[RMDB]
RNA sequence: GGGAACGACUCGAGUAGAGUCGAAAACGCAUGAUGUGCUCAACUGGAAUUACCAUCUGAACGCGGGAUACCGCAAGUCGAUGAAUUAAUGCUACGUGCAUUACCUCCGCUGUUACUCGUAUCACUGACAAAAUCCAAGUUCUUCGGAACUUGGAAAUCUUUGAAUCGUGUUCGCACGAUUCAAAGAAAAAGAAACAACAACAACAAC
Reactivity to 2A3 in 0.01 (KOAc 150mM, MgCl2 10mM, bicine 150mM(pH8.5), 24C), signal-to-noise 3, nucleotides 027 to 156: c060g010c020a010u090g000a060u040g030u020g030c010u040c090a050a090c050u100g040g050a050a040u080u040a110c050c040a040u040c040u120g040a080a030c030g010c010g010g030g030a030u060a210c000c020g010c040a080a030g070u070c030g000a040u010g030a010a130u100u060a060a010u040g040c000u030a060c240g110u240g000c000a000u000u060a050c010c010u010c000c010g010c060u050g010u040u030a050c010u010c050g010u070a040u100c060a040c120u070g070a040c060a060a090a000a020u030c020c000a000a000g010u000u000c010u030u020c070g120g010a000a000c000u000u000g000g020a000a010a010